Chemical mapping of a 177-nucleotide RNA with DMS and 2A3. The reactions ran in a buffer of 150 mM KOAc, 10 mM MgCl2 and 150 mM bicine (pH 8.5), at 24 C. Reactivities are given for positions 27 through 126. For 2A3, 2,232 sequencing reads were counted. It was measured as part of the RMDB library OK1LIB.
[RMDB]
RNA sequence: GGGAACGACUCGAGUAGAGUCGAAAAGGGCUCACACAUUCAUUUAUGGAGAACUAAUUACAUUUUUACGGUUAUGUCGAGCAGUUGUUCCUGUGAAAGGCCUUGGACACGAUAUCCGUAUCGUCUACGAUAGGUCACGAUUCGUCGUGACCUAUCGAAAAGAAACAACAACAACAAC
Reactivity to DMS in 0.01 (KOAc 150mM, MgCl2 10mM, bicine 150mM(pH8.5), 24C), signal-to-noise 3, nucleotides 027 to 126: g000g000g000c000u010c020a180c050a100c110a130u020u010c190a010u030u000u010a070u000g000g020a020g010a050a080c050u000a030a150u020u020a090c160a050u010u020u000u020u010a130c060g020g000u040u010a040u010g000u000c070g020a110g000c160a010g040u020u000g000u020u000c000c030u050g010u000g040a050a050a100g000g020c020c010u000u000g020g000a130c180a030c020g010a040u020a040u020c070c030g000u000a000u000c020g000u000c080u000a170
Reactivity to 2A3 in 0.01 (KOAc 150mM, MgCl2 10mM, bicine 150mM(pH8.5), 24C), signal-to-noise 4, nucleotides 027 to 126: g020g010g000c000u020c050a060c000a000c010a150u090u080c030a040u080u070u210a190u220g070g010a110g000a110a010c030u060a130a120u230u080a090c050a140u080u130u090u110u110a060c070g050g000u050u110a050u080g080u050c060g000a020g090c060a030g050u050u050g030u050u020c000c000u010g030u010g040a140a060a000g040g000c010c000u040u050g070g020a020c010a000c060g020a000u010a050u040c030c060g020u040a040u100c020g010u000c010u070a050